The record gives the reactivity of an RNA of 207 nucleotides to DMS and 2A3. For 2A3 the reverse transcriptase was SuperScript II with manganese. The reactions ran in a buffer of 150 mM KOAc, 10 mM MgCl2 and 150 mM bicine (pH 8.5), at 24 C.
RNA sequence: GGGAACGACUCGAGUAGAGUCGAAAACGAUGCAAAUCCAGCACAUUAUGAGAAAUCACCUAACGGAUAUGUCUAUACAGCAAGUAAAUACUCUAUCUAUCAUCAAAAGGAAUUCAGGGUCUUCACUGGUUCUAAUGCCUUUUAUAGACAUCUUCCAGUGAACCGUUAAAUUCGUUUAACGGUUCACAAAAGAAACAACAACAACAAC
Reactivity to DMS in 0.01 (KOAc 150mM, MgCl2 10mM, bicine 150mM(pH8.5), 24C), signal-to-noise 2, nucleotides 027 to 156: c010g030a100u010g020c050a090a060a210u000c040c020a150g020c070a050c040a110u000u000a080u010g020a160g030a060a120a180u000c020a040c020c020u010a100a140c060g020g010a070u010a030u000g000u000c000u010a080u000a080c150a140g000c010a020a160g050u010a080a040a090u000a030c010u030c030u000a060u000c020u010a080u000c080a100u010c130a120a100a110a090g020g010a030a070u000u000c120a100g000g010g000u000c040u030u000c100a130c050u000g030g000u010u000c020u000a030a060u000g020c000c000u000u000u000u020a090u010a040g020a000c010a030u000c090u000u010c030c010a300
Reactivity to 2A3 in 0.01 (KOAc 150mM, MgCl2 10mM, bicine 150mM(pH8.5), 24C), signal-to-noise 6, nucleotides 027 to 156: c050g070a070u060g010c050a090a010a130u070c060c030a040g110c030a030c010a060u120u300a110u300g050a080g060a060a090a080u110c060a100c070c060u110a140a060c070g000g010a010u010a010u030g000u000c000u010a020u010a040c060a060g030c040a090a050g040u100a080a070a100u130a080c060u040c030u090a110u090c040u090a090u120c070a040u050c040a050a070a080a030g050g020a030a010u160u160c030a020g020g000g050u040c080u100u090c080a100c130u050g000g040u040u030c020u080a080a050u090g000c000c000u060u120u030u030a020u010a010g000a000c000a010u030c050u050u010c010c010a000